[RMDB]
RNA sequence: GGGAACGACUCGAGUAGAGUCGAAAAGUCCACUGUCCAAUUUCCUCCGUGGGUCAUGACGGAAGGGCCAGAGGGGAAGGACCUCAGUUCACUGAUGGAUGUGGAUGCCAGGGGCGAGAGCCCCAUGCUUUAGACCUCCUUUCGAGGAGGUCUAAAGAAAAGAAACAACAACAACAAC
Reactivity to 2A3 in 0.01 (KOAc 150mM, MgCl2 10mM, bicine 150mM(pH8.5), 24C), signal-to-noise 9, nucleotides 027 to 126: g020u010c010c010a000c070u070g050u010c000c030a150a210u030u040u030c000c010u040c020c050g300u170g080g020g050u060c050a090u220g160a120c130g060g070a080a130g080g000g000c010c010a050g060a230g020g000g000g010a030a050g020g020a010c000c010u040c000a170g030u300u160c120a170c230u050g030a060u140g070g060a050u140g010u000g000g000a000u020g050c020c030a090g010g000g000g000c020g010a080g010a020g070c000c000c000c000a000u020g000
Reactivity to DMS in 0.01 (KOAc 150mM, MgCl2 10mM, bicine 150mM(pH8.5), 24C), signal-to-noise 2, nucleotides 027 to 126: g000u000c000c000a010c020u000g010u000c010c000a140a150u050u000u000c000c010u030c020c060g020u020g000g020g000u000c020a070u040g000a160c180g010g010a050a050g020g010g000c020c010a120g000a200g010g010g000g010a030a080g000g000a060c020c070u020c010a030g000u020u020c300a040c030u000g000a060u010g000g000a110u020g110u000g020g000a030u000g010c030c000a110g000g030g020g000c000g010a200g010a200g020c020c000c000c000a000u010g000